RNA sequence: GGGAACGACUCGAGUAGAGUCGAAAAUGACAGCAGAUAGGCGCGAAAGCGUCUAUUUAUUAGCAAUGACUGUAUGCUAAUAAACUAUUGUGAAAACAAUAGUUUGCUGUCUAACAGUCAUUGAUACGAUCUACACUAAUUUCGAUUGGUGUAGAUCAAAAGAAACAACAACAACAAC
Reactivity to 2A3 in 0.01 (KOAc 150mM, MgCl2 10mM, bicine 150mM(pH8.5), 24C), signal-to-noise 4, nucleotides 027 to 126: u040g000a000c000a000g000c000a000g000a000u000a000g000g000c000g000c000g050a070a040a010g000c000g000u010c000u000a000u000u000u000a000u000u000a000g000c010a010a040u070g010a000c000u000g000u000a000u030g000c000u000a000a000u000a000a000a000c000u000a000u000u000g010u010g090a050a020a000a000c000a000a000u000a000g000u000u000u000g000c000u000g000u000c000u000a000a000c000a000g000u000c000a010u040u280g060a030u040a060c070
Reactivity to DMS in 0.01 (KOAc 150mM, MgCl2 10mM, bicine 150mM(pH8.5), 24C), signal-to-noise 8, nucleotides 027 to 126: u010g000a010c000a000g010c010a000g010a000u000a000g000g000c000g010c010g010a140a120a140g010c000g020u000c000u000a000u000u000u000a000u000u000a000g000c000a080a190u010g000a010c000u000g000u000a200u010g000c000u000a000a000u000a000a000a030c000u000a000u000u000g010u000g000a140a070a140a030c000a010a000u000a000g000u000u000u000g010c000u000g000u000c000u010a060a030c000a010g000u000c000a160u040u020g000a130u030a100c200